[RMDB]
Chemical mapping of a 207-nucleotide RNA with 2A3 and DMS.

RNA sequence: GGGAACGACUCGAGUAGAGUCGAAAAAUGUAAACAGCCUGCUAAGGUUAAAAACAAGCAUUUCUGUAUGGAGGUGGCCUAUUCACUAGAUUUCCUCCUCCUCUCCCCUGCCUCAUACUCUGCCAGGCUCUGGGGAUGCAAAGGCAAGAGAGGCUCAAUUUACUGAGCAGUUCGCUGCUCAGUAAAUAAAAGAAACAACAACAACAAC
Reactivity to 2A3 in 0.01 (KOAc 150mM, MgCl2 10mM, bicine 150mM(pH8.5), 24C), signal-to-noise 4, nucleotides 027 to 156: a000u050g000u030a100a090a060c040a040g030c020c030u110g100c110u180a140a080g090g040u200u150a120a100a050a000a030c070a120a030g020c010a040u020u080u100c090u090g100u100a150u120g000g010a000g000g020u050g030g000c000c000u090a070u090u220c100a080c150u020a030g020a110u080u050u060c000c000u010c000c000u000c000c010u020c000u000c000c010c000c010u020g010c000c000u010c000a020u080a200c010u040c040u040g060c020c010a070g110g060c000u010c040u050g000g000g000g020a010u010g000c010a040a100a010g000g000c010a020a030g030a010g000a010g000g000c000u000c050a040
Reactivity to DMS in 0.01 (KOAc 150mM, MgCl2 10mM, bicine 150mM(pH8.5), 24C), signal-to-noise 2, nucleotides 027 to 156: a060u000g000u010a090a150a170c090a120g000c010c030u000g040c090u010a100a070g050g020u000u000a020a090a110a120a040c040a050a090g010c010a140u010u000u000c050u000g050u000a030u030g030g000a070g020g040u000g000g030c060c030u000a030u000u000c070a130c160u000a060g020a090u000u000u000c020c000u000c020c010u000c090c000u000c030u000c020c000c020c070u000g010c000c010u000c010a110u000a080c040u000c040u010g010c030c000a070g010g050c070u000c080u000g040g020g040g000a030u000g010c080a070a120a110g000g020c020a100a140g010a110g000a080g030g010c070u000c020a090